[RMDB]
RNA sequence: GGGAACGACUCGAGUAGAGUCGAAAAUCUGCAAUCUUCGGAUUGCAGAAAAUACGGAUCCAUACGGAUCCAUACGGUUCCAUACGGAUCCAUACGGAUCCAAAACGUACCUCUUCGGAGGUACGAACGAUUACCCAUAGUUCGCUAUGGGUAAUCGAAAAGAAACAACAACAACAAC
Reactivity to DMS in 0.01 (KOAc 150mM, MgCl2 10mM, bicine 150mM(pH8.5), 24C), signal-to-noise 4, nucleotides 027 to 126: u000c010u000g020c000a020a010u000c000u000u000c200g040g010a000u000u000g000c010a010g000a000a010a060a090u010a070c120g000g010a020u000c000c000a160u000a050c220g000g010a000u000c000c000a010u000a010c160g020g020u000u000c030c010a240u000a080c140g010g010a000u000c000c000a120u000a040c190g000g000a010u010c000c000a080a010a080a180c010g010u000a000c010c010u000c010u000u020c190g010g010a010g000g000u010a000c000g000a050a060
Reactivity to 2A3 in 0.01 (KOAc 150mM, MgCl2 10mM, bicine 150mM(pH8.5), 24C), signal-to-noise 4, nucleotides 027 to 126: u000c000u000g000c010a000a000u000c000u020u030c080g140g000a000u010u000g000c000a000g000a000a010a000a000u100a020c060g000g000a000u020c010c010a020u090a220c110g000g000a000u010c000c000a000u060a010c070g060g020u090u010c030c000a020u060a100c070g010g010a000u000c010c020a020u090a160c080g010g010a000u000c000c000a020a040a000a000c000g000u000a000c000c000u020c000u040u050c220g130g010a010g000g000u010a000c000g000a020a010